[RMDB]
RNA sequence: GGGAACGACUCGAGUAGAGUCGAAAAGAUAUGGACGACAGAGCGAUAAGAAGGUAUCGGAAACGAUAUGCUUCUUUUGACGCUCCUAGUCCUAAGUCAAAUCCAAUCCUGUUCGCAGGAUUGGAAACCCGUUACUAGUGUUCGCACUAGUAACGGGAAAAGAAACAACAACAACAAC
Reactivity to 2A3 in 0.01 (KOAc 150mM, MgCl2 10mM, bicine 150mM(pH8.5), 24C), signal-to-noise 1, nucleotides 027 to 126: g010a000u030a010u080g020g000a000c000g000a000c000a020g020a000g010c010g090a160u070a300a030g000a000a010g020g000u000a010u000c010g000g030a010a000a000c070g000a020u010a000u050g160c030u000u010c040u020u010u010u070g050a030c000g020c000u000c000c000u010a000g000u000c020c000u000a020a010g020u000c030a040a030a090u000c000c000a000a000u000c000c000u020g020u030u030c280g000c070a020g000g000a000u000u000g010g000a010a030a010
Reactivity to DMS in 0.01 (KOAc 150mM, MgCl2 10mM, bicine 150mM(pH8.5), 24C), signal-to-noise 2, nucleotides 027 to 126: g000a000u000a060u010g010g000a010c000g000a170c300a130g000a020g030c000g020a150u020a020a020g000a020a000g000g000u000a020u000c010g000g000a030a020a040c000g000a000u000a010u000g030c010u000u000c000u000u000u000u010g000a080c060g010c000u000c010c000u010a300g000u020c000c000u000a010a110g020u010c010a100a080a080u000c000c000a000a000u000c000c000u000g010u000u030c240g010c000a020g000g020a010u000u000g000g000a000a010a070